[RMDB]
Notes:
Structure probing data (DMS and 2A3) for a 177-nucleotide construct. Values cover nucleotides 27 to 126. For DMS the reverse transcriptase was MarathonRT. It was measured as part of the RMDB library M2PK50.
RNA sequence: GGGAACGACUCGAGUAGAGUCGAAAAGUUUCUAAGUUCGCUUAGAAACAAAUCCAGCGCGGAAUCGAACGUGCCUGACCCUAUUCGUUAAAGAUUUUCAAAAAACGUUCCUCUUCGGAGGAACGAAGGACUAUGAUAGGUUCGCCUAUCAUAGUCCAAAAGAAACAACAACAACAAC
Reactivity to DMS in 0.01 (KOAc 150mM, MgCl2 10mM, bicine 150mM(pH8.5), 24C), signal-to-noise 2, nucleotides 027 to 126: g000u000u000u000c010u000a020a010g000u000u010c230g000c010u000u000a000g000a020a000a000c000a030a090a040u000c110c110a130g000c020g050c060g000g000a150a080u010c290g000a080a080c020g000u000g010c040c040u010g000a080c020c010c000u010a050u030u000c040g020u000u000a090a080a160g000a120u000u000u000u000c050a000a010a040a090a090a100c020g000u000u000c000c000u000c010u000u020c220g000g000a000g000g000a000a010c000g000a030a050
Reactivity to 2A3 in 0.01 (KOAc 150mM, MgCl2 10mM, bicine 150mM(pH8.5), 24C), signal-to-noise 2, nucleotides 027 to 126: g000u000u010u060c020u010a010a030g000u000u050c150g030c150u000u000a010g000a000a010a000c010a000a030a020u000c040c020a000g000c000g000c020g010g100a090a180u170c120g080a180a060c010g020u020g050c040c020u040g050a060c000c000c000u080a150u120u130c080g060u060u180a100a060a050g010a300u000u080u110u220c100a060a050a010a010a040a050c000g000u000u000c000c000u030c000u040u000c210g120g000a020g000g000a000a010c010g000a000a000